[RMDB]
RNA sequence: GGGAACGACUCGAGUAGAGUCGAAAACUGUGGUCGCUGGCCGGCGGCAUGCCCCUGCACCGAUACCGGAAGUCAUCGUGAUCCGCGCGGCUAGUGAUGACCCGGCCGGGGUGGACGAGCUGGUGGCAUUUGCAGCGAUAUUCGUAUCGCUGCAAAUAAAAGAAACAACAACAACAAC
Reactivity to DMS in 0.01 (KOAc 150mM, MgCl2 10mM, bicine 150mM(pH8.5), 24C), signal-to-noise 3, nucleotides 027 to 126: c030u020g040u030g000g020u000c050g040c010u000g010g010c050c040g010g030c010g020g030c170a060u030g000c110c010c060c050u030g000c040a080c030c030g000a100u020a120c050c010g020g000a090a060g020u000c050a030u000c010g020u010g000a120u010c040c030g000c190g020c050g000g000c010u000a080g020u020g000a050u010g000a090c010c000c030g030g020c090c040g000g010g000g030u010g020g000a080c140g010a090g000c010u000g000g040u000g010g000c020
Reactivity to 2A3 in 0.01 (KOAc 150mM, MgCl2 10mM, bicine 150mM(pH8.5), 24C), signal-to-noise 3, nucleotides 027 to 126: c050u070g040u100g120g000u020c020g000c020u030g070g000c020c000g000g030c000g000g020c040a020u110g010c000c020c000c000u050g000c060a080c060c030g080a100u120a140c010c040g040g020a120a070g030u060c030a040u090c040g040u010g030a090u100c040c000g050c010g030c050g040g000c000u010a000g000u010g040a060u020g010a020c000c000c000g000g000c010c000g000g020g010g010u050g020g030a050c010g020a020g010c010u030g000g060u040g010g000c000